[RMDB]
RNA sequence: GGGAACGACUCGAGUAGAGUCGAAAACGUGUCCUUUGCGACGGCAACCACGCGCCGGAACGUUACCGAGGCGCGGUUUGCAUCCACGUGGAACGAUACAAGCGGCUUACAAUACGUCGAACUCGCCAACGACGGCAGCACGUUCACGCGCAUCAACGUAGUGUGGAGGGUUCGCCCUCCACACUACAAAAGAAACAACAACAACAAC
Reactivity to 2A3 in 0.01 (KOAc 150mM, MgCl2 10mM, bicine 150mM(pH8.5), 24C), signal-to-noise 2, nucleotides 027 to 156: c130g060u100g050u160c070c030u160u180u240g090c110g030a120c120g060g040c090a090a070c120c070a210c170g020c020g050c000c000g010g020a150a090c110g060u090u120a130c060c000g030a180g070g000c010g000c040g030g000u020u000u000g000c020a030u060c130c000a020c020g000u060g010g050a000a000c020g040a020u040a170c050a190a060g050c000g090g000c040u240u090a000c050a000a120u040a110c050g000u000c020g020a110a010c010u050c180g000c050c030a080a000c100g100a050c010g010g000c000a020g000c020a000c090g010u000u070c060a090c110g000c000g050c040a110u140c130a110a040c120
The data come from the RNA Mapping Database (RMDB), library OK3TST.
This 207-nucleotide RNA was probed chemically with 2A3.
Conditions: 150 mM KOAc, 10 mM MgCl2 and 150 mM bicine (pH 8.5), 24 C.